RNA sequence: GGGAACGACUCGAGUAGAGUCGAAAAGUUGCGACCUUCGGGUCGCAACAAAUACCGAGGUACAUGCUCGGUAGAAUCUACAAACCCUUGGAAACAAGGGAAAAAGCUUAACCUUCGGGUUAAGCAACCAGACAUAGUAGUUCGCUACUAUGUCUGGAAAAGAAACAACAACAACAAC
Reactivity to 2A3 in 0.01 (KOAc 150mM, MgCl2 10mM, bicine 150mM(pH8.5), 24C), signal-to-noise 3, nucleotides 027 to 126: g010u000u000g000c020g000a010c020c000u020u060c220g080g000g010u000c000g030c010a000a010c000a000a000a000u000a000c000c000g000a000g030g080u300a190c110a160u280g120c010u000c020g000g000u000a010g000a010a040u040c050u110a150c130a050a090a090c000c000c000u000u000g020g010a030a040a010c000a000a000g000g000g000a010a040a010a010a010g000c000u000u000a000a000c000c010u020u040c280g080g000g000u010u000a000a000g000c000a000a010
Reactivity to DMS in 0.01 (KOAc 150mM, MgCl2 10mM, bicine 150mM(pH8.5), 24C), signal-to-noise 3, nucleotides 027 to 126: g000u000u010g000c020g010a010c000c000u010u030c170g030g040g000u000c010g000c000a000a020c000a010a090a090u000a030c010c000g010a010g020g020u010a140c290a100u010g010c010u000c000g010g010u000a000g010a110a070u010c080u000a120c110a130a080a170c000c000c000u000u010g000g000a170a110a190c000a000a000g000g010g020a000a010a070a120a090g010c010u000u000a010a010c000c000u000u010c180g020g020g010u000u000a000a010g000c010a020a030
This 177-nucleotide RNA was probed chemically with 2A3 and DMS. Values cover nucleotides 27 to 126. The reactions ran in a buffer of 150 mM KOAc, 10 mM MgCl2 and 150 mM bicine (pH 8.5), at 24 C. For 2A3 the reverse transcriptase was SuperScript II with manganese.